[RMDB]
RNA sequence: GGGAACGACUCGAGUAGAGUCGAAAAGAUAUGGACGCUGGCAUCGAUCUGGUUGAUCGGAAACGAUCACCAGGGAGCCAGUGUCCUAAGUCAAAGACGUAGCUGAUGUUCGCAUCAGCUACGUCAAUCAUUUGACCGAGUUCGCUCGGUCAAAUGAAAAAGAAACAACAACAACAAC
Reactivity to 2A3 in 0.01 (KOAc 150mM, MgCl2 10mM, bicine 150mM(pH8.5), 24C), signal-to-noise 1, nucleotides 027 to 126: g030a010u040a030u080g000g000a010c000g000c010u010g000g050c050a300u260c120g170a150u140c030u000g070g000u200u300g040a000u010c000g010g050a000a040a010c010g000a000u000c010a010c000c000a000g040g010g000a000g000c020c000a010g000u010g000u020c000c000u000a000a000g000u000c000a030a010a120g010a000c010g000u000a000g000c010u010g010a020u020g070u100u070c300g000c150a000u000c010a000g010c000u000a000c000g000u000c000a010a000
Reactivity to DMS in 0.01 (KOAc 150mM, MgCl2 10mM, bicine 150mM(pH8.5), 24C), signal-to-noise 2, nucleotides 027 to 126: g000a030u000a290u000g010g010a020c010g030c010u010g000g020c000a300u000c160g010a060u020c000u000g000g020u000u010g020a000u000c000g000g010a070a090a140c000g010a000u000c000a020c010c000a010g000g000g000a010g020c000c000a010g010u010g000u000c000c000u000a010a070g010u010c030a110a140a130g000a020c000g020u000a000g000c000u000g010a000u000g010u020u000c250g000c000a000u000c000a000g010c010u000a000c010g000u000c000a030a060